[RMDB]
RNA sequence: GGGAACGACUCGAGUAGAGUCGAAAACAGUCGGCCUUUGGAAGGAAAAGCAGUAAGCCACCUGAGCCCCGCAUGUUGGCCACACUCAGAGUAUCAAGUGAGUAUCACUCGACACCUGCAAGGAGAGCGCAGGGGGUGUUCAGCAAGGCAUCGCUUACGAUGACGAUAGUUUCGACUAUCGUCAUCGAAAAGAAACAACAACAACAAC
Reactivity to 2A3 in 0.01 (KOAc 150mM, MgCl2 10mM, bicine 150mM(pH8.5), 24C), signal-to-noise 5, nucleotides 027 to 156: c030a010g080u050c020g040g010c000c010u060u080u090g090g040a080a090g010g050a060a100a020a010g020c010a020g070u140a100a020g020c010c000a040c000c020u010g000a010g020c010c000c000c000g050c100a170u060g010u100u130g160g000c010c020a030c000a010c020u020c010a020g040a040g110u030a050u070c040a120a000g000u010g030a030g060u120a130u240c020a010c020u010c020g010a010c010a010c030c000u010g010c070a090a050g030g010a040g010a000g010c020g000c010a010g030g000g000g000g020u040g090u060u040c030a020g010c050a090a090g040g000c020a050u090c060g020c020u040u040a030
Reactivity to DMS in 0.01 (KOAc 150mM, MgCl2 10mM, bicine 150mM(pH8.5), 24C), signal-to-noise 1, nucleotides 027 to 156: c060a120g000u000c060g030g020c000c010u010u000u010g020g020a240a140g020g030a000a060a070a140g040c030a140g000u000a040a090g000c000c010a170c090c020u000g010a160g010c010c020c000c020g000c070a090u000g020u010u010g000g060c000c050a130c050a120c030u000c010a080g010a120g070u000a040u010c030a030a080g030u000g000a230g000u000a080u000c010a040c010u000c050g000a040c020a010c000c000u030g030c010a130a070g010g030a170g000a060g080c000g000c040a060g030g010g020g000g040u000g020u000u000c030a050g010c000a050a050g030g040c010a060u000c070g010c040u000u010a180